[RMDB]
RNA sequence: GGGAACGACUCGAGUAGAGUCGAAAACGAAGUUAAUUAUUACUGCAAGGUAACUAGGCGGUUCGGUGAGGCUACUUGCAAUCUACUGCGAUCCCUGAGAUUUGAGAUUGAGUGUACUGGAAGGGAAGACAAAGUCGAGAUCGAAAGGGUAUUUGAAUCUUAGCUGACCUUUCGAGGUCAGCUAAGAAAAAGAAACAACAACAACAAC
Reactivity to 2A3 in 0.01 (KOAc 150mM, MgCl2 10mM, bicine 150mM(pH8.5), 24C), signal-to-noise 1, nucleotides 027 to 156: c030g060a060a010g070u040u090a050a090u080u120a080u150u080a070c040u000g050c010a000a070g010g010u090a110a050c030u040a070g070g020c040g050g000u040u030c010g030g050u060g020a070g010g000c010u040a000c030u030u060g000c020a000a090u020c070u090a080c050u100g140c100g090a090u050c000c010c050u070g040a070g020a170u050u100u240g060a040g040a050u020u090g010a040g050u040g010u100a070c070u040g000g040a030a020g020g060g050a020a010g080a010c070a010a040a000g040u040c010g030a000g000a030u010c010g010a040a040a000g010g010g000u010a040u000u060u040g040a020a060